The record gives the reactivity of an RNA of 207 nucleotides to 2A3 and DMS.
[RMDB]
RNA sequence: GGGAACGACUCGAGUAGAGUCGAAAAAAUGGCGCGAUGGUGCGCUCAAUAUAUGGCCUUACCUGAAUACAUCCGCCAAUACAUAGUGCUUGAAAACGACGAAUAUAGUUAUGGGGUGUUGGAUUUAUUACCAUGGUGUGAAAAAUAUGAUAUACCGAACUUAGUGAACCUUCGGGUUCACUAAGUUAAAAGAAACAACAACAACAAC
Reactivity to 2A3 in 0.01 (KOAc 150mM, MgCl2 10mM, bicine 150mM(pH8.5), 24C), signal-to-noise 2, nucleotides 027 to 156: a000a000u060g020g000c040g010c110g000a030u110g070g030u020g090c040g010c000u020c120a100a030u180a000u020a030u070g020g020c000c020u040u070a070c010c050u070g160a080a080u120a050c020a010u010c030c050g000c020c020a000a030u050a070c050a010u180a050g030u100g060c070u050u100g020a020a020a020a020c030g080a010c020g010a060a000u150a020u060a170g100u270u060a060u120g030g000g010g000u000g020u000u080g020g020a050u110u000u080a110u230u190a050c030c030a050u030g020g010u000g000u000g110a100a050a000a100a110u150a070u140g050a050u080a020u040a140c070c100g000
Reactivity to DMS in 0.01 (KOAc 150mM, MgCl2 10mM, bicine 150mM(pH8.5), 24C), signal-to-noise 1, nucleotides 027 to 156: a070a070u010g030g050c010g050c020g010a170u010g030g050u010g050c000g000c020u020c080a080a090u000a150u020a150u000g010g000c040c060u000u010a060c010c050u010g020a120a090u010a030c030a030u000c020c020g010c030c020a100a150u000a130c080a110u000a120g000u010g030c060u030u010g020a100a060a140a140c010g030a010c040g000a040a100u000a100u000a060g020u000u010a110u000g020g000g010g030u010g000u010u000g000g020a130u020u020u010a100u010u010a100c020c020a070u010g000g030u000g030u000g000a030a050a050a120a060u000a140u010g010a090u010a090u020a110c030c010g010

For DMS the reverse transcriptase was MarathonRT. It was measured as part of the RMDB library OK3TST. Values cover nucleotides 27 to 156.